[RMDB]
RNA sequence: GGGAACGACUCGAGUAGAGUCGAAAAUUCCCCUAUUUCGAUAGGGGAACACCUGCGGGCGGCUCGCAGUUCCGACUUCCUCCUCCUCUGAGUCAAAGGGCCAUAGGCCUCGGUUCGCCGAGGCCAAUCCCUCUAAUCUCUUCGGAGAUUAGAGGGAAAAAGAAACAACAACAACAAC
Reactivity to DMS in 0.01 (KOAc 150mM, MgCl2 10mM, bicine 150mM(pH8.5), 24C), signal-to-noise 2, nucleotides 027 to 126: u000u010c000c000c000c010u000a000u000u000u040c150g000a030u000a000g020g000g020g000a010a010c100a090c080c000u000g040c030g000g010g040c090g010g010c040u030c030g020c050a090g010u000u000c030c030g010a120c040u000u000c040c020u010c030c020u000c020c000u000c030u000g000a070g020u020c110a050a090a100g000g010g010c060c070a100u000a070g010g000c000c000u000c000g010g000u010u030c210g010c030c000g000a020g010g020c000c000a000a060